Record summary
An RNA of 177 nucleotides, treated with 2A3 and DMS and read out base by base. For DMS, 1,115 sequencing reads were counted.
RNA sequence: GGGAACGACUCGAGUAGAGUCGAAAAUCGUGGAGUCCCUGCCGCCGAAGGGAGGGCUCGUGCUCUACAAGUGGCACCUGAAGAGGCUUUUCUCGAUCCCCGUCAAUCGACGGGAAGCCUUCAUCGCCCUGACGAUGGGAUUCGUCCCAUCGUCAGGAAAAGAAACAACAACAACAAC
Reactivity to 2A3 in 0.01 (KOAc 150mM, MgCl2 10mM, bicine 150mM(pH8.5), 24C), signal-to-noise 2, nucleotides 027 to 126: u090c010g020u060g060g040a000g130u180c000c010c000u050g160c000c030g090c030c100g220a110a080g060g040g030a010g010g030g080c020u030c040g040u060g030c000u030c010u040a100c060a140a200g030u130g040g040c070a060c000c040u080g050a060a010g030a000g010g040c000u070u020u040u030c040u050c040g060a090u030c030c030c010c010g000u000c010a140a300u220c050g000a000c040g010g000g000a000a000g000c020c000u060u060c030a110u080c060g050c020
Reactivity to DMS in 0.01 (KOAc 150mM, MgCl2 10mM, bicine 150mM(pH8.5), 24C), signal-to-noise 1, nucleotides 027 to 126: u000c090g000u000g000g000a000g010u010c100c010c010u000g030c020c030g010c060c070g030a120a100g000g000g000a060g030g020g000c020u000c040g010u000g010c020u000c070u000a040c130a090a120g040u040g020g020c040a070c100c130u000g000a110a150g000a020g000g000c000u000u000u000u000c020u000c040g000a040u000c090c030c000c070g000u000c060a140a090u010c060g000a010c090g000g000g000a010a000g000c010c000u000u000c080a110u010c110g000c130

Notes
For 2A3, 1,141 sequencing reads were counted. For DMS the reverse transcriptase was MarathonRT. Source: RMDB library OK2TST, as collected in RNAgym.